[RMDB]
RNA sequence: GGGAACGACUCGAGUAGAGUCGAAAAGAUAUGGAGAACUACUCGCCUCGGAUAGCUUGGUGUCGGAAACGACACUCAAGUGCGGAGUGCGAGCUCCUAAGUCAAAAGCCGCACUUCGGUGCGGCAACCCAUAAAGAUUGUUCGCAAUCUUUAUGGGAAAAGAAACAACAACAACAAC
Reactivity to DMS in 0.01 (KOAc 150mM, MgCl2 10mM, bicine 150mM(pH8.5), 24C), signal-to-noise 5, nucleotides 027 to 126: g000a030u000a300u010g000g000a010g010a090a030c040u010a300c000u000c010g020c000c000u000c000g020g020a150u010a100g010c010u000u000g010g020u000g010u000c000g010g000a090a060a190c010g010a010c000a000c010u010c010a000a010g030u000g010c090g000g000a020g000u000g020c000g020a020g010c010u000c000c010u000a050a220g010u010c020a060a080a170a140g010c010c000g000c000a010c000u000u010c120g020g020u000g020c000g010g000c000a000a010
Reactivity to 2A3 in 0.01 (KOAc 150mM, MgCl2 10mM, bicine 150mM(pH8.5), 24C), signal-to-noise 4, nucleotides 027 to 126: g010a010u080a050u210g040g030a020g020a090a050c100u160a060c000u300c010g000c010c020u000c050g260g080a230u120a140g020c010u000u000g000g000u010g010u010c000g000g030a100a070a030c010g000a000c000a010c020u120c020a010a000g010u020g050c090g140g010a010g020u300g000c010g000a000g000c000u000c000c000u000a110a040g040u040c020a000a010a080a210g010c010c000g040c010a000c010u050u090c300g120g000u000g000c000g010g000c000a000a010